[RMDB]
RNA sequence: GGGAACGACUCGAGUAGAGUCGAAAACUAAGAUUUGGCAUGGUUCACUGCCUAUUGAUCCACGUCGGAGUGACAAGAUUUAUGGUAUUGCAAUAACUACUGGUAACGCAAGUGGUUAUACUGGUCAAAAGCGAUAUAUUUUCGAAUAUAUCGCUUUAAAAGAAACAACAACAACAAC
Reactivity to 2A3 in 0.01 (KOAc 150mM, MgCl2 10mM, bicine 150mM(pH8.5), 24C), signal-to-noise 9, nucleotides 027 to 126: c060u100a110a040g090a260u080u060u110g030g000c040a040u090g050g080u100u080c040a040c080u080g030c000c000u020a040u020u100g030a030u030c020c010a040c100g040u040c040g060g130a130g080u110g040a030c050a080a030g060a140u050u160u130a130u200g090g010u070a080u090u160g060c070a070a010u010a040a000c000u030a010c000u030g090g040u140a130a000c070g010c160a070a060g010u010g000g010u000u000a010u010a050c070u120g030g020u050c020a040
Reactivity to DMS in 0.01 (KOAc 150mM, MgCl2 10mM, bicine 150mM(pH8.5), 24C), signal-to-noise 9, nucleotides 027 to 126: c140u010a070a120g010a140u010u030u020g000g000c020a050u010g010g010u010u010c060a080c110u010g000c060c030u010a080u020u010g000a050u010c020c030a060c120g010u000c030g010g000a100g000u010g010a070c080a110a110g000a090u010u010u020a070u020g010g010u010a050u010u010g010c130a090a030u010a020a010c010u010a010c010u000g000g010u010a080a090c300g000c090a080a030g010u000g000g010u000u000a020u010a060c080u010g010g010u010c080a060